Chemical mapping of a 207-nucleotide RNA with 2A3 and DMS. Reactivities are given for positions 27 through 156. Values are in units of 0.01, from 0 to 300, in steps of 10. It was measured as part of the RMDB library OK3TST.

RNA sequence: GGGAACGACUCGAGUAGAGUCGAAAAUCAACUUAAAGCUGGUGAGGUUGCGGAUAACGCUGCCGCCAAGCCUCUCAUCACUACCCUACUCCCUAAGAUGAUUGCACGCAUCAACGACUGGUUUGAGGAAGUGAAAGCUAAGCGCGGCAAGCGCCCGUACUCCAAUUAUCUUCGGAUAAUUGGAGUAAAAAGAAACAACAACAACAAC
Reactivity to 2A3 in 0.01 (KOAc 150mM, MgCl2 10mM, bicine 150mM(pH8.5), 24C), signal-to-noise 4, nucleotides 027 to 156: u040c010a010a060c050u100u210a170a080a070g080c080u100g040g070u070g080a040g060g000u050u030g000c020g000g010a040u030a120a010c010g000c010u000g000c000c010g010c010c010a030a010g010c010c000u050c060u050c050a110u020c010a020c020u090a140c030c020c000u090a150c050u080c010c000c000u010a040a080g020a040u030g020a020u040u240g100c170a040c180g030c010a020u010c010a010a100c020g130a060c070u090g020g080u130u100u110g110a050g000g000a040a010g010u000g030a070a010a000g000c020u050a090a030g050c060g010c000g150g000c140a170a010g000c010g010c030c000c000g010
Reactivity to DMS in 0.01 (KOAc 150mM, MgCl2 10mM, bicine 150mM(pH8.5), 24C), signal-to-noise 1, nucleotides 027 to 156: u010c030a040a060c110u010u000a050a060a060g020c000u010g000g050u010g000a040g040g000u000u030g010c000g000g000a170u000a020a040c070g070c010u000g010c010c010g000c020c020a200a110g000c060c040u000c120u030c080a070u000c020a020c050u000a120c000c000c000u010a050c060u000c040c010c010u000a230a230g000a010u050g010a090u000u010g030c070a120c100g010c030a100u010c010a050a120c000g010a030c050u000g010g000u000u000u000g020a140g020g000a070a240g020u000g010a050a060a010g000c050u000a050a090g050c090g000c040g000g000c010a100a050g030c000g000c070c040c040g040